RNA sequence: GGGAACGACUCGAGUAGAGUCGAAAACAACACGUCCUCGUCGUACAAAGUGGUAACAUGUGUCACCACAUAUCCAAGCUUGGGUACACGGGCUUGACCCAACCCCUUGGGCGGAUGGUGGCACAUGAAAAGAAGUAACACUUCGGUGUUACUUCAAGAUUAAGUUUGCGUUCGCGCAAACUUAAUCAAAAGAAACAACAACAACAAC
Reactivity to DMS in 0.01 (KOAc 150mM, MgCl2 10mM, bicine 150mM(pH8.5), 24C), signal-to-noise 2, nucleotides 027 to 156: c080a060a100c080a110c120g000u000c020c010u000c050g000u000c080g000u000a070c150a100a100a140g020u000g000g030u000a140a140c010a050u010g030u000g020u000c000a000c000c000a000c070a130u000a020u000c000c000a020a130g020c050u000u020g000g050g080u000a030c140a050c090g000g010g050c050u000u040g020a180c000c000c020a140a030c020c020c000c020u020u020g010g000g030c090g020g000a100u000g020g020u000g020g000c040a030c000a000u010g020a020a000a100a150g000a000a010g000u000a010a020c010a020c050u000u000c290g050g000u000g010u000u020a000c000u000u000c020a020a110
Reactivity to 2A3 in 0.01 (KOAc 150mM, MgCl2 10mM, bicine 150mM(pH8.5), 24C), signal-to-noise 4, nucleotides 027 to 156: c040a000a030c030a020c050g120u090c010c030u080c040g130u050c020g020u110a100c070a090a090a050g070u070g080g070u130a140a020c000a000u000g000u000g010u010c000a000c010c030a070c060a120u240a010u030c000c000a000a010g030c010u030u020g020g000g000u030a020c010a020c060g010g020g010c000u210u280g170a300c000c000c000a010a020c010c000c000c000u010u000g010g000g000c000g040g000a030u020g010g000u000g000g000c000a000c000a010u000g000a000a010a000a010g000a000a000g010u000a010a000c010a000c010u040u070c200g050g000u000g000u000u000a000c000u000u000c000a000a000